RNA sequence: GGGAACGACUCGAGUAGAGUCGAAAAGGCACCAAAUUCACUUAGUUUGGAUUAAGUCUGCAUCUGGGCUUAAACCCAUAGGUAGUCAGGAACCAGGAAAAGUUUUUGAUUGUAUACUGAGUGUCAAACACUGCAGAGUGAACUACAGCAGUGAUCACCGUAAUUAAUAGUUCGCUAUUAAUUACGGAAAAGAAACAACAACAACAAC
Reactivity to 2A3 in 0.01 (KOAc 150mM, MgCl2 10mM, bicine 150mM(pH8.5), 24C), signal-to-noise 9, nucleotides 027 to 156: g070g010c060a030c060c020a040a070a070u140u080c030a020c040u040u050a020g060u070u060u080g010g000a010u000u020a010a010g010u010c010u040g040c050a190u110c150u210g020g000g000c010u010u020a030a040a050c030c010c000a030u050a070g100g040u050a010g020u010c010a010g000g020a020a020c040c030a050g270g070a050a100a040a040g020u010u020u010u030u030g040a050u010u070g060u110a100u020a140c030u020g010a000g020u020g030u050c020a020a070a040c000a010c000u010g010c020a020g070a060g220u100g080a120a030c050u130a070c140a030g000c000a010g000u010g030a030u110c040a020
Reactivity to DMS in 0.01 (KOAc 150mM, MgCl2 10mM, bicine 150mM(pH8.5), 24C), signal-to-noise 6, nucleotides 027 to 156: g020g020c040a170c020c020a050a080a090u010u010c030a050c050u000u010a070g040u010u000u010g010g010a160u010u000a030a040g020u000c010u010g020c130a140u000c190u000g020g020g000c010u000u000a050a060a050c000c000c010a060u000a080g020g020u000a040g020u000c020a040g020g000a030a030c020c040a110g040g010a080a120a130a110g010u000u000u000u010u000g000a070u000u000g010u000a120u000a120c040u010g010a080g020u000g000u010c070a090a060a120c030a040c010u000g000c020a080g010a200g030u010g010a090a100c020u000a030c020a070g020c020a080g030u000g000a110u000c040a160